[RMDB]
Chemical mapping of a 177-nucleotide RNA with DMS and 2A3. The DMS profile rests on 4,229 reads. Conditions: 150 mM KOAc, 10 mM MgCl2 and 150 mM bicine (pH 8.5), 24 C. 2A3 adducts were read by reverse transcription with SuperScript II with manganese.
RNA sequence: GGGAACGACUCGAGUAGAGUCGAAAAAAAGUCGGUGAGCGACAGGCGAAGAUUGCCGCCGUCUUGCAACGUGGCGGGAUCCUGCUGAUUGAUGUCGCUGGUGGUGCCAACCGCGGCCCUGCGGUCCGCUUAAUGCGGGUUUCGACCCGCAUUAAGCAAAAGAAACAACAACAACAAC
Reactivity to DMS in 0.01 (KOAc 150mM, MgCl2 10mM, bicine 150mM(pH8.5), 24C), signal-to-noise 3, nucleotides 027 to 126: a030a020a070g010u010c060g030g030u010g000a060g020c000g010a030c030a100g010g020c020g000a110a050g000a040u010u010g020c000c010g040c010c000g030u000c060u010u010g000c260a090a090c180g020u010g010g020c020g000g000g000a020u000c020c090u010g000c020u000g010a170u020u000g000a090u000g010u010c000g030c000u000g010g020u010g010g010u010g010c040c050a120a070c030c020g020c020g010g000c020c020c020u010g020c030g000g000u000c170c100
Reactivity to 2A3 in 0.01 (KOAc 150mM, MgCl2 10mM, bicine 150mM(pH8.5), 24C), signal-to-noise 2, nucleotides 027 to 126: a000a000a000g130u100c060g000g030u110g070a060g000c010g010a010c000a010g000g050c020g030a080a020g040a130u070u090g300c010c010g000c010c010g060u030c040u060u180g090c080a110a090c060g060u110g010g000c000g070g000g000a020u050c000c020u080g010c030u030g050a240u130u260g070a080u070g010u010c000g000c000u000g020g060u060g010g080u110g020c000c030a040a010c020c000g020c040g010g050c010c000c040u000g020c000g000g010u070c050c070